[RMDB]
RNA sequence: GGGAACGACUCGAGUAGAGUCGAAAAGCAGAAACAGGGGCACCCCAUUGGCAGCCAUGCAACGUAGUGCAAACGGCAGAUCUAGAGAGCACUCCAUGCUACAAGGGUUUAUUCAUGCAAUCCAACAGUGGCAUUCAAUAUUCGUAUUGAAUGCCACAAAAGAAACAACAACAACAAC
Reactivity to DMS in 0.01 (KOAc 150mM, MgCl2 10mM, bicine 150mM(pH8.5), 24C), signal-to-noise 2, nucleotides 027 to 126: g020c080a070g000a040a090a110c100a070g000g000g000g000c060a040c060c000c030c030a210u010u000g000g020c040a090g040c040c010a130u000g010c090a080a070c110g010u010a020g030u000g010c060a020a100a100c130g010g000c060a050g000a060u020c060u000a110g010a080g010a070g010c030a030c070u000c060c050a100u010g020c020u000a070c080a040a030g000g000g000u000u000u010a090u010u000c070a060u010g010c070a100a060u000c030c040a030a050c250a110
Reactivity to 2A3 in 0.01 (KOAc 150mM, MgCl2 10mM, bicine 150mM(pH8.5), 24C), signal-to-noise 2, nucleotides 027 to 126: g000c020a000g080a070a080a050c040a050g020g000g040g010c020a040c000c010c000c010a060u040u030g040g000c030a000g000c030c000a040u030g000c020a070a030c070g130u100a070g070u040g060c010a100a090a050c050g010g040c040a020g020a090u040c020u140a070g020a000g000a000g150c010a000c020u000c020c000a040u080g000c000u060a010c020a040a080g030g040g020u010u060u060a140u020u060c040a050u100g050c020a000a040u020c030c030a040a040c040a110